[RMDB]
RNA sequence: GGGAACGACUCGAGUAGAGUCGAAAAUUCGAGUAAUCAAUUGUGCAGUUCUAGCAGCGAGCGGCAGUACCACUGGAGGGAAGCAAUUCAGCACAGUAAGCCGCCCGUGCAGAGGCGAAGCGGAAGAAACAUUGUAUUUCUUCGGAAAUACAAUGUUAAAAGAAACAACAACAACAAC
Reactivity to 2A3 in 0.01 (KOAc 150mM, MgCl2 10mM, bicine 150mM(pH8.5), 24C), signal-to-noise 9, nucleotides 027 to 126: u080u040c040g010a010g090u180a060a140u110c130a070a140u160u100g060u070g070c060a030g040u050u030c040u080a120g000c040a030g090c020g010a010g000c010g010g000c020a040g070u070a060c030c030a020c050u010g030g020a060g040g070g060a060a010g060c040a010a030u040u020c010a010g020c040a030c000a060g020u020a030a010g000c000c000g000c000c010c000g010u020g000c010a010g010a030g080g030c020g020a070a010g030c040g020g050a080a020g030a040
Reactivity to DMS in 0.01 (KOAc 150mM, MgCl2 10mM, bicine 150mM(pH8.5), 24C), signal-to-noise 9, nucleotides 027 to 126: u020u000c070g010a090g000u020a080a090u020c060a080a110u010u010g020u010g020c070a140g010u020u000c020u010a130g030c020a090g020c020g000a070g010c010g000g010c020a100g010u020a090c190c220a040c020u000g000g010a240g010g000g010a050a070g010c230a060a120u000u010c030a030g000c050a230c070a030g010u000a090a170g010c000c010g010c020c010c020g030u000g010c020a040g000a050g000g010c020g010a080a090g010c050g010g000a060a090g010a140
Record summary:
An RNA of 177 nucleotides, treated with 2A3 and DMS and read out base by base. For DMS the reverse transcriptase was MarathonRT. High 2A3 reactivity points to a flexible backbone, as in loops and unpaired stretches.